[RMDB]
RNA sequence: GGGAACGACUCGAGUAGAGUCGAAAAGAUAUGGAGGUGGUCCGUUAAGGCGAUUUGAUCGGAAACGAUCAUUUUCGCUGGAGCCACCUCCUAAGUCAAAACAGUAUAUACUUCGGUAUAUACUGAACGGUACAUUCUAGUUCGCUAGAAUGUACCGAAAAGAAACAACAACAACAAC
Reactivity to DMS in 0.01 (KOAc 150mM, MgCl2 10mM, bicine 150mM(pH8.5), 24C), signal-to-noise 2, nucleotides 027 to 126: g010a000u000a070u010g010g000a030g000g020u000g010g020u000c010c010g030u010u010a100a150g010g020c000g000a030u000u000u000g010a000u000c010g000g000a000a020a050c000g010a010u000c000a000u000u000u000u000c000g050c000u000g010g020a060g010c000c000a010c000c010u000c000c000u010a000a060g000u000c000a100a080a100a220c000a030g000u000a000u000a010u000a010c000u000u020c210g020g000u000a000u000a010u000a010c000u000g000a020a080
Reactivity to 2A3 in 0.01 (KOAc 150mM, MgCl2 10mM, bicine 150mM(pH8.5), 24C), signal-to-noise 3, nucleotides 027 to 126: g000a010u010a000u060g010g000a020g000g000u010g000g020u010c020c030g060u200u220a300a200g300g000c010g000a020u000u000u020g010a010u000c000g000g000a000a000a000c000g010a000u020c000a010u040u010u030u180c020g010c070u030g000g010a020g190c000c000a000c010c000u010c000c000u000a000a000g000u000c000a020a020a060a120c020a010g000u010a000u000a000u010a020c010u040u080c210g060g000u000a010u000a000u000a010c000u000g000a110a010